[RMDB]
RNA sequence: GGGAACGACUCGAGUAGAGUCGAAAAACUGUGUGCGCCGAGGUAGGGGAAGCGUGUCGGUGCAGGCUGGAGACCACCGUUAAGCGUCGCGGCAACCAAUUAAGCGCCGAUUCCAAUCAGCGCGACUACGCCCUCGCUGCCUGAUCAGCGACGGCUAUCUAUGUGUUGGCUUCGGCCAACACAUAGAAAAAGAAACAACAACAACAAC
Reactivity to 2A3 in 0.01 (KOAc 150mM, MgCl2 10mM, bicine 150mM(pH8.5), 24C), signal-to-noise 2, nucleotides 027 to 156: a000c060u070g010u010g020u020g100c070g000c030c030g020a030g060g010u130a040g110g030g010g010a020a030g040c090g050u070g050u030c010g030g000u030g010c000a020g000g000c000u000g020g000a000g010a020c000c000a010c010c010g180u100u300a030a000g000c000g010u000c000g030c010g020g000c000a020a030c030c030a040a070u210u210a130a060g000c030g000c000c040g040a030u280u110c050c030a110a080u010c010a010g000c010g000c000g010a000c010u150a040c070g000c020c000c000u000c000g000c000u020g010c000c080u160g020a190u190c010a000g000c000g000a010c020g010g030c000u010a010
Source: RMDB library RSTRND, as collected in RNAgym. The record gives the reactivity of an RNA of 207 nucleotides to 2A3. For 2A3, 1,412 sequencing reads were counted. Values are in units of 0.01, from 0 to 300, in steps of 10.